[RMDB]
RNA sequence: GGGAACGACUCGAGUAGAGUCGAAAAGACGACUGGUUCCAGGCGAUGGUCGACGGCGACGAGGAGAAGCGAGAGACGUGGGCAGAAAUCAUUGAGGCCCGGAUCAACAUCGGUGUCCCGUACAUCAUCUUCCGGGACAACAUGAACGAAGGGAAGCAGUACUGAAUUUCUUCGGAAAUUCAGUACUAAAAGAAACAACAACAACAAC
Reactivity to DMS in 0.01 (KOAc 150mM, MgCl2 10mM, bicine 150mM(pH8.5), 24C), signal-to-noise 2, nucleotides 027 to 156: g010a090c020g000a100c050u010g000g030u010u000c070c070a060g030g020c160g010a120u000g020g030u030c000g030a140c030g010g000c020g010a100c000g020a140g000g000a100g030a080a090g010c030g030a110g030a110g030a110c060g020u020g040g020g020c030a080g000a070a080a090u000c050a160u000u000g010a280g020g000c000c010c000g050g010a070u000c030a030a110c020a050u010c040g020g000u000g030u000c010c040c040g030u010a060c100a100u000c060a120u010c100u000u010c110c020g070g010g020a020c000a020a040c080a040u010g000a030a170c080g000a160a050g040g000g030a070a170g010c120
Reactivity to 2A3 in 0.01 (KOAc 150mM, MgCl2 10mM, bicine 150mM(pH8.5), 24C), signal-to-noise 3, nucleotides 027 to 156: g080a020c030g020a030c030u050g040g000u090u010c020c010a060g030g030c050g060a050u060g000g030u040c040g040a040c020g010g030c020g000a040c040g010a030g050g040a050g020a060a030g070c070g010a030g000a020g020a060c070g050u150g010g020g000c020a020g180a050a090a060u080c060a060u020u130g020a040g070g020c010c000c020g030g000a060u060c040a060a080c010a070u120c080g010g010u040g020u010c020c010c010g040u080a050c010a130u110c010a030u030c010u130u020c040c000g010g010g020a020c020a000a000c030a030u110g040a060a010c070g030a050a030g040g010g010a020a020g060c070